[RMDB]
RNA sequence: GGGAACGACUCGAGUAGAGUCGAAAAAAAGUGUACGAAAGAACAAAGAAGCAAUCAAACCGAGUAGUGAAAUGAUGGCUUCAGUCCAAAAUGGGCAAACACUACAGACGGACCCAAAGGCAAUUAACGUAUUGAAUUUAUUCGUAAAUUCAAUACGAAAAGAAACAACAACAACAAC
Reactivity to DMS in 0.01 (KOAc 150mM, MgCl2 10mM, bicine 150mM(pH8.5), 24C), signal-to-noise 5, nucleotides 027 to 126: a060a040a030g020u000g010u000a120c070g010a070a070a070g000a090a060c090a050a080a110g000a040a040g010c020a060a030u010c030a040a060a180c090c050g010a110g010u000a070g010u000g010a110a090a110u000g010a040u020g020g010c010u000u000c040a080g000u000c010c010a030a040a060a130u020g020g020g010c070a060a050a060c020a020c030u000a040c060a080g000a120c120g000g000a130c020c010c020a040a040a070g000g010c110a050a090u010u010a040a170
Reactivity to 2A3 in 0.01 (KOAc 150mM, MgCl2 10mM, bicine 150mM(pH8.5), 24C), signal-to-noise 5, nucleotides 027 to 126: a010a000a020g060u050g000u030a050c050g060a100a030a090g040a120a030c030a050a100a030g030a030a000g000c020a020a040u020c010a050a040a040c030c030g040a030g100u190a020g030u120g070a060a100a120u070g000a010u020g040g000c000u030u020c040a010g010u000c020c010a070a280a050a190u110g010g000g000c000a030a050a000c000a000c010u060a020c020a040g130a050c040g030g020a010c000c000c000a040a030a020g080g020c040a030a050u170u060a150a020